Source: RMDB library OK3TST, as collected in RNAgym.
This 207-nucleotide RNA was probed chemically with 2A3 and DMS.
For 2A3 the reverse transcriptase was SuperScript II with manganese.
The 2A3 profile rests on 900 reads.
DMS adducts were read by reverse transcription with MarathonRT.
RNA sequence: GGGAACGACUCGAGUAGAGUCGAAAAGCAGAGAAAGCAGAAGCCGCAGAAGCAGAAGGCUUUCGCCCGAUCACCUCGCAGGAACAGCUAGACCGCAUCAUCUCAAACCGGUUAGAACGCACACGGAACAAGUUCGCUGACUACGACGAACUGAAAAUCUAUCAAGGUUCUUCGGAACCUUGAUAGAAAAAGAAACAACAACAACAAC
Reactivity to 2A3 in 0.01 (KOAc 150mM, MgCl2 10mM, bicine 150mM(pH8.5), 24C), signal-to-noise 2, nucleotides 027 to 156: g040c050a010g070a000g040a140a060a000g000c020a020g040a090a010g030c050c080g010c100a030g070a230a030g000c050a010g000a100a020g030g030c000u050u020u000c050g000c000c000c040g010a020u040c020a040c050c010u050c040g000c030a040g040g040a100a020c000a030g040c020u050a010g040a080c040c030g000c020a020u070c010a040u040c030u020c050a090a090a110c020c010g020g000u080u070a070g020a110a000c030g070c070a020c010a010c090g040g030a070a000c020a130a000g000u010u010c020g000c040u040g130a200c040u120a000c100g140a050c030g020a020a000c030u040g010a030a020a070a070
Reactivity to DMS in 0.01 (KOAc 150mM, MgCl2 10mM, bicine 150mM(pH8.5), 24C), signal-to-noise 1, nucleotides 027 to 156: g070c080a070g010a180g010a000a100a010g040c000a020g030a260a230g030c030c070g000c130a250g010a120a090g000c010a040g000a180a250g000g020c010u000u000u000c100g010c000c020c020g020a230u000c030a000c030c020u000c040g030c060a110g040g000a070a080c020a090g010c000u000a040g060a030c030c020g000c070a080u000c030a040u010c080u000c030a090a100a070c040c010g030g030u010u010a220g000a080a040c070g040c030a140c140a100c130g010g000a080a080c060a070a070g060u000u000c000g000c000u000g000a290c240u000a020c000g000a020c040g000a020a010c000u000g000a080a040a060a070